[RMDB]
An RNA of 177 nucleotides, treated with DMS and 2A3 and read out base by base. Source: RMDB library M2PK90, as collected in RNAgym. Values cover nucleotides 27 to 126. Conditions: 150 mM KOAc, 10 mM MgCl2 and 150 mM bicine (pH 8.5), 24 C.

RNA sequence: GGGAACGACUCGAGUAGAGUCGAAAAACUUUUAGCGAUUAUCGUUAUUGAAAUGUCCUUGGCAUAUCGCUAUGCACAGAGGUAUUAGUAGCGCAAUAGCUAUUGAAGGACAUUACCUCUCAAAUAAAUACCUGUGAUAGUUCGCUAUCACAGGUAUAAAAGAAACAACAACAACAAC
Reactivity to DMS in 0.01 (KOAc 150mM, MgCl2 10mM, bicine 150mM(pH8.5), 24C), signal-to-noise 3, nucleotides 027 to 126: a080c090u010u000u000u010a020g000c010g010a080u010u020a090u000c050g010u000u000a070u000u000g000a040a060a040u000g010u000c000c020u000u000g020g010c030a030u000a010u000c070g000c080u010a020u000g010c070a150c210a040g000a040g000g020u000a080u000u000a050g000u010a030g010c010g010c190a060a090u010a130g010c000u000a020u020u000g030a080a090g000g000a070c070a020u010u000a030c030c030u000c020u000c150a050a070a070u010a050a080
Reactivity to 2A3 in 0.01 (KOAc 150mM, MgCl2 10mM, bicine 150mM(pH8.5), 24C), signal-to-noise 3, nucleotides 027 to 126: a000c030u120u130u040u120a010g020c020g030a050u100u100a050u300c020g020u050u030a070u020u180g060a030a050a060u040g030u000c020c000u030u050g040g000c050a010u020a010u260c030g010c020u020a020u070g030c090a080c030a120g160a060g040g080u090a070u060u080a060g040u010a010g000c020g000c070a120a090u050a090g010c000u040a020u000u130g070a040a040g010g000a000c000a010u010u030a010c010c000u000c010u000c030a040a100a060u170a090a200